[RMDB]
RNA sequence: GGGAACGACUCGAGUAGAGUCGAAAAACAGUCAGUACGCUGACUGAGGGAAACGGGAGCCGGGCUUGGGACAAGAGCCAUCCCAGGUCCAAGGCCAAGUAGGCUCUAGUGAUGGUACGCCAUCACAAAAACUGGUCUACCUUCGGGUAGACCAGAACCAUGCAAAAACGUUCGCGUUUUUGCAUGGAAAAGAAACAACAACAACAAC
Reactivity to 2A3 in 0.01 (KOAc 150mM, MgCl2 10mM, bicine 150mM(pH8.5), 24C), signal-to-noise 2, nucleotides 027 to 156: a000c010a000g000u010c000a000g020u080a030c160g010c150u000g000a000c000u000g020a110g020g020g000a160a130a050c110g120g020g000a080g020c030c070g030g000g000c000u010u000g000g000g000a000c020a100a020g000a010g000c000c000a000u000c000c000c000a000g000g000u030c020c010a060a030g030g000c030c010a030a060g080u130a100g080g000c000u010c010u000a050g000u000g000a010u010g000g010u050a060c290g040c020c000a020u010c020a010c000a000a060a010a000a000c000u000g000g000u000c000u000a000c000c010u010u040c150g050g010g010u000a000g000a000c000c000a000g000a010a000